The data come from the RNA Mapping Database (RMDB), library OK1LIB. An RNA of 177 nucleotides, treated with DMS and read out base by base. For DMS, 1,569 sequencing reads were counted. The RNA was probed in 150 mM KOAc, 10 mM MgCl2 and 150 mM bicine (pH 8.5) at 24 C.
RNA sequence: GGGAACGACUCGAGUAGAGUCGAAAAGUGCAGAGUGAAAUUCAUAGGUGCGUCGCCAAUUUGGCGGAACGACCCGGUACUCCGCGUAGUCGCGAGGUAAACGUUCUGUGUUGGCGUUCAGGCCUCAAUACGGUAGCGCAUUCGUGCGCUACCGUAUAAAAGAAACAACAACAACAAC
Reactivity to DMS in 0.01 (KOAc 150mM, MgCl2 10mM, bicine 150mM(pH8.5), 24C), signal-to-noise 1, nucleotides 027 to 126: g010u030g020c020a090g000a000g000u010g010a120a140a090u010u000c000a150u080a120g020g010u010g000c010g040u020c000g000c000c000a020a110u000u020u080g080g100c040g020g010a040a040c080g000a200c000c020c060g010g030u000a000c000u010c000c010g040c020g020u100a070g020u100c100g040c090g000a150g030g030u000a140a030a050c000g030u000u000c010u030g000u000g000u030u000g000g000c070g020u020u000c150a050g000g000c000c000u000c090a030